[RMDB]
RNA sequence: GGGAACGACUCGAGUAGAGUCGAAAAAUGAACAGCAGUUAGAUAGUGCAAGUUUCCGUGGACGUGGCGACAAAGCGCAAAUGGAUAUGUUUAAGACAACUUUUCGUGCAAUGAAUAGCCAUUAUGGCUGAUCAGUAUGAUUCGUCAUACUGAUCAGAAAAGAAACAACAACAACAAC
Reactivity to DMS in 0.01 (KOAc 150mM, MgCl2 10mM, bicine 150mM(pH8.5), 24C), signal-to-noise 9, nucleotides 027 to 126: a080u010g010a080a070c080a100g010c040a050g010u000u010a090g010a110u010a080g020u000g010c060a060a100g010u000u000u000c020c030g020u010g010g010a090c110g020u000g000g010c020g010a080c060a020a060a220g000c040g020c040a030a050a040u000g000g000a090u010a060u000g010u000u000u010a090a120g010a070c070a030a070c040u000u000u000u000c100g020u000g010c050a040a160u000g000a060a070u010a140g010c010c010a070u000u000a100u000g020g010
Reactivity to 2A3 in 0.01 (KOAc 150mM, MgCl2 10mM, bicine 150mM(pH8.5), 24C), signal-to-noise 9, nucleotides 027 to 126: a000u090g010a040a010c020a010g050c010a010g030u090u110a060g070a240u120a050g080u040g030c020a060a050g000u000u040u000c030c030g020u050g010g000a040c050g020u020g010g010c010g000a040c030a020a040a010g020c010g000c020a010a030a040u070g040g020a070u090a080u250g080u020u090u110a110a050g100a020c010a030a040c040u050u050u040u060c070g020u030g000c010a030a030u050g030a100a040u070a080g010c010c020a020u120u100a130u190g090g000